[RMDB]
RNA sequence: GGGAACGACUCGAGUAGAGUCGAAAAGGGCAUCCACUUCUGCCGUUAAGUUGCAAAAUAAUGAGAUCAAACCUUCAGGUCUAAAAACCAUGGUUGUGUCUGCGGGUCAAGAGCAAACUAACUGUAACAAGAUUAUACUUCGGUAUAAUCAAAAGAAACAACAACAACAAC
Reactivity to DMS in 0.01 (KOAc 150mM, MgCl2 10mM, bicine 150mM(pH8.5), 24C), signal-to-noise 7, nucleotides 027 to 129: g000g000g000c010a020u020c010c060a080c080u000u040c020u030g040c050c100g000u000u000a040a140g030u000u000g050c060a050a080a080a060u050a080a070u060g020a070g030a000u020c080a080a100a120c000c000u030u050c090a070g000g030u040c020u000a020a030a040a060a040c050c020a010u030g010g020u000u000g020u070g030u010c040u010g040c020g010g010g040u040c040a040a080g030a100g000c080a040a040a110c110u030a010a010c110u040g020u060a050a090c160a100a090
Reactivity to 2A3 in 0.01 (KOAc 150mM, MgCl2 10mM, bicine 150mM(pH8.5), 24C), signal-to-noise 7, nucleotides 027 to 129: g010g020g020c020a040u040c010c000a030c010u070u050c030u040g030c000c020g030u040u050a090a030g010u040u040g030c020a020a070a050a090u140a070a070u210g050a010g010a040u030c050a050a050a070c000c000u140u170c100a050g000g000u010c040u170a060a050a030a050a030c030c010a060u080g060g000u020u050g040u000g030u020c030u040g050c030g030g020g000u050c040a050a040g010a020g030c020a040a080a010c030u060a060a000c030u040g020u140a050a030c030a070a070

Source: RMDB library 15KLIB, as collected in RNAgym. An RNA of 170 nucleotides, treated with DMS and 2A3 and read out base by base. The RNA was probed in 150 mM KOAc, 10 mM MgCl2 and 150 mM bicine (pH 8.5) at 24 C. DMS adducts were read by reverse transcription with MarathonRT. High 2A3 reactivity points to a flexible backbone, as in loops and unpaired stretches. 2A3 adducts were read by reverse transcription with SuperScript II with manganese.